[RMDB]
RNA sequence: GGGAACGACUCGAGUAGAGUCGAAAAACCAGCAGCUUGGUCAGAAUUAAAUAAAAAAUAUGGUAAACUUAGCUUAAUGGAAUGCUUAUCUCCAGCGAUAAACUAUGCAAGAGAGGGAUACGUAGUACGGCAUUAUAUUAUUCGUAAUAUAAUGCCGAAAAGAAACAACAACAACAAC
Reactivity to DMS in 0.01 (KOAc 150mM, MgCl2 10mM, bicine 150mM(pH8.5), 24C), signal-to-noise 5, nucleotides 027 to 126: a150c010c010a090g000c130a050g010c010u010u000g010g000u000c050a120g000a120a050u010u030a050a060a100u070a030a030a100a090a070a040u010a030u010g000g010u010a080a090a070c040u010u000a050g010c020u000u010a080a090u030g000g020a120a070u020g000c060u000u010a030u010c050u010c030c060a070g000c060g000a070u020a030a060a100c130u000a020u020g000c050a070a070g010a070g000a070g000g000g000a060u010a030c080g030u000a060g010u020a170
Reactivity to 2A3 in 0.01 (KOAc 150mM, MgCl2 10mM, bicine 150mM(pH8.5), 24C), signal-to-noise 6, nucleotides 027 to 126: a000c010c000a010g050c010a000g000c010u060u060g000g000u040c020a030g130a180a130u150u110a100a080a110u300a090a130a070a010a010a020u240a090u100g030g030u070a060a060a050c020u030u050a010g020c010u040u130a080a010u180g030g060a070a040u100g010c010u050u050a020u020c010u000c020c000a020g020c020g020a020u100a060a030a020c080u100a030u200g010c050a090a030g060a010g020a080g130g040g000a040u060a070c100g030u020a010g070u020a100
Structure probing data (DMS and 2A3) for a 177-nucleotide construct.
For 2A3, 6,929 sequencing reads were counted.
The RNA was probed in 150 mM KOAc, 10 mM MgCl2 and 150 mM bicine (pH 8.5) at 24 C.
Reactivities are rounded to 0.1 and cut off at 0 and 3.
DMS (dimethyl sulfate) methylates the pairing face of unpaired adenines and cytosines.
2A3 is a SHAPE reagent: it acylates the 2'-hydroxyl of flexible nucleotides of all four kinds.
For DMS the reverse transcriptase was MarathonRT.
For 2A3 the reverse transcriptase was SuperScript II with manganese.